[RMDB]
RNA sequence: GGGAACGACUCGAGUAGAGUCGAAAAGACAAUAGCGUAGGGAACCAAGCAAAGAGGUAAGAAAUCCCACGGUAGAAGGCUUGGUUCUAGCCGUGGGAAGAAGAAGUCCCACUCCCUUCGCCGAUAACCAGGUAUAUCCUUUCGAGGAUAUACCUGGAAAAGAAACAACAACAACAAC
Reactivity to 2A3 in 0.01 (KOAc 150mM, MgCl2 10mM, bicine 150mM(pH8.5), 24C), signal-to-noise 2, nucleotides 027 to 126: g060a000c070a050a120u080a200g030c020g010u030a020g030g010g000a020a020c030c010a020a000g050c030a010a110a130g240a100g070g070u170a140a090g080a090a090a030u000c010c010c010a010c000g000g000u070a070g050a160a000g050g010c030u010u040g020g010u060u010c000u030a010g000c000c000g020u030g000g050g010a000a010g020a000a000g000a020a010g020u020c000c000c000a010c010u000c000c000c000u010u000c000g000c020c020g060a050u050a100a050
Reactivity to DMS in 0.01 (KOAc 150mM, MgCl2 10mM, bicine 150mM(pH8.5), 24C), signal-to-noise 2, nucleotides 027 to 126: g000a120c110a080a090u000a130g020c010g060u000a010g010g000g000a060a050c020c000a020a040g020c080a120a130a080g020a060g010g000u000a110a080g000a080a120a080u000c000c010c010a020c000g000g020u000a040g000a040a020g000g000c070u000u010g010g000u020u000c160u000a020g010c000c020g030u000g000g000g010a030a020g010a050a080g000a110a100g000u000c000c000c000a300c040u000c010c000c000u000u000c010g020c040c100g000a040u020a050a110